[RMDB]
The record gives the reactivity of an RNA of 177 nucleotides to 2A3. 2A3 adducts were read by reverse transcription with SuperScript II with manganese.

RNA sequence: GGGAACGACUCGAGUAGAGUCGAAAAGUGCCUAAAAACCCACGGCAAGUGAGAGAGUUCCUUGGAACUGCAGGCUACUGCCGGCUGUGGAUUCCCGGUUUUGCCGAGCUCGCUGCCCCGCUAUAUCCACCCUCUGGCGGUUCGCCGCCAGAGGGUGAAAAGAAACAACAACAACAAC
Reactivity to 2A3 in 0.01 (KOAc 150mM, MgCl2 10mM, bicine 150mM(pH8.5), 24C), signal-to-noise 1, nucleotides 027 to 126: g040u010g130c000c000u030a040a070a070a100a100c050c000c000a000c020g000g040c040a080a030g070u070g100a000g000a040g020a000g090u000u060c080c010u140u300g190g050a010a010c020u070g020c030a030g090g000c020u120a100c000u100g100c020c000g000g040c040u080g050u080g120g020a050u100u200c020c000c010g060g000u110u010u040u120g020c000c030g000a030g010c050u030c020g000c000u130g010c000c000c000c030g040c040u080a110u020a070u300c030